[RMDB]
RNA sequence: GGGAACGACUCGAGUAGAGUCGAAAACAAUCAACAAUAUGGUUAGUGUAGUUAUGCUGAAAAUCGUUGAGGUUGUAUGGAAUAGGUUAACCGUAAGACCUUAAGUUGAAAAACUUUAAAAUUAAUCAAAAUCAUGUACACUUCGGUGUACAUGAAAGGACUAACUUACGUUCGCGUAAGUUAGUCCAAAAGAAACAACAACAACAAC
Reactivity to 2A3 in 0.01 (KOAc 150mM, MgCl2 10mM, bicine 150mM(pH8.5), 24C), signal-to-noise 1, nucleotides 027 to 156: c050a000a040u120c070a000a060c050a070a080u050a040u210g060g080u020u020a110g030u120g020u020a070g050u300u000a030u090g030c010u010g090a130a070a000a000u070c060g010u010u050g010a000g030g020u090u050g040u020a150u020g030g040a080a110u030a110g030g010u060u000a100a060c000c010g000u030a070a000g020a010c020c000u000u010a000a010g000u030u010g030a110a000a000a030a030c000u150u030u140a050a030a030a010u240u200a100a130u080c000a010a000a000a180u010c000a000u000g000u000a000c010a010c010u030u020c130g050g000u000g020u000a010c010a000u000g010a000a000a000
Overview:
Conditions: 150 mM KOAc, 10 mM MgCl2 and 150 mM bicine (pH 8.5), 24 C. Structure probing data (2A3) for a 207-nucleotide construct. 2A3 adducts were read by reverse transcription with SuperScript II with manganese. Reactivities are given for positions 27 through 156. For 2A3, 544 sequencing reads were counted.